The record gives the reactivity of an RNA of 177 nucleotides to DMS and 2A3. As a SHAPE reagent, 2A3 marks flexible, mostly unpaired nucleotides at the ribose 2'-OH. It was measured as part of the RMDB library OK2TRN. The reactions ran in a buffer of 150 mM KOAc, 10 mM MgCl2 and 150 mM bicine (pH 8.5), at 24 C. For 2A3, 1,519 sequencing reads were counted.
RNA sequence: GGGAACGACUCGAGUAGAGUCGAAAAGGCGUCUUCGCUGCCUCGGCCGCCCUGCACUGACCGGUAGCCGCCGUAAUUGCGGCAUUGUUCCCAUAAACGGAUGUGGGUGUGGGUGCCGAAGUAGCAGCGUACUCCACGUGUUCGCACGUGGAGUACGAAAAGAAACAACAACAACAAC
Reactivity to DMS in 0.01 (KOAc 150mM, MgCl2 10mM, bicine 150mM(pH8.5), 24C), signal-to-noise 1, nucleotides 027 to 126: g000g000c040g010u010c090u010u000c080g020c010u010g010c010c060u010c010g010g000c000c050g000c030c010c010u000g040c000a020c000u000g000a080c010c020g000g000u000a110g000c010c010g000c010c160g020u010a110a110u030u010g000c010g020g010c000a090u010u010g030u000u020c010c000c000a150u010a070a120a100c010g000g020a140u000g020u000g000g000g020u000g010u000g020g020g040u000g000c000c010g000a030a030g010u000a030g040c010a080g000
Reactivity to 2A3 in 0.01 (KOAc 150mM, MgCl2 10mM, bicine 150mM(pH8.5), 24C), signal-to-noise 2, nucleotides 027 to 126: g170g030c080g120u060c030u150u080c110g000c020u000g010c000c020u000c000g000g030c060c050g050c000c020c020u050g000c020a010c010u060g060a060c000c000g010g050u070a050g010c000c000g000c000c000g020u040a070a110u130u230g030c000g000g010c010a020u000u300g000u000u020c010c000c000a040u120a000a210a000c020g000g000a060u090g140u240g300g030g000u010g000u040g040g010g000u020g000c010c000g000a020a000g000u030a030g010c020a000g000